An RNA of 177 nucleotides, treated with DMS and 2A3 and read out base by base. The RNA was probed in 150 mM KOAc, 10 mM MgCl2 and 150 mM bicine (pH 8.5) at 24 C. For DMS, 1,789 sequencing reads were counted. The data come from the RNA Mapping Database (RMDB), library OK2TRN.
[RMDB]
RNA sequence: GGGAACGACUCGAGUAGAGUCGAAAAAGGACACCGCGCUGGUAUUCGGACAGAUGGACGAGCCGCCGGGCACCCGUAUGCGUGUUGCGCUGUCUGCGCUGACGAUGGCGGAGUGGUUCCGUGACGAUACUUCCAUGACCUUCGGGUCAUGGAAGUAAAAAGAAACAACAACAACAAC
Reactivity to DMS in 0.01 (KOAc 150mM, MgCl2 10mM, bicine 150mM(pH8.5), 24C), signal-to-noise 2, nucleotides 027 to 126: a040g020g000a040c150a080c050c000g020c220g010c020u000g020g010u000a110u010u010c040g010g010a090c030a170g000a120u010g020g020a080c020g010a030g010c020c010g010c020c060g030g000g000c100a080c050c020c030g010u000a080u010g010c030g030u000g010u010u000g010c010g030c010u000g010u010c090u000g010c060g050c010u000g020a060c030g000a030u010g000g020c020g010g010a090g020u000g000g000u000u010c010c020g030u000g020a120c130g020a190
Reactivity to 2A3 in 0.01 (KOAc 150mM, MgCl2 10mM, bicine 150mM(pH8.5), 24C), signal-to-noise 1, nucleotides 027 to 126: a000g070g010a070c040a020c080c020g000c020g030c030u170g100g050u070a240u150u070c000g000g020a020c030a030g300a150u170g000g000a020c020g070a000g020c020c000g010c000c000g090g000g020c040a070c000c060c000g000u140a110u290g080c020g010u100g020u110u100g010c000g000c030u120g050u110c050u100g000c020g000c070u010g000a020c000g020a000u070g020g060c050g000g000a110g050u070g030g040u050u040c050c070g040u050g030a030c010g020a030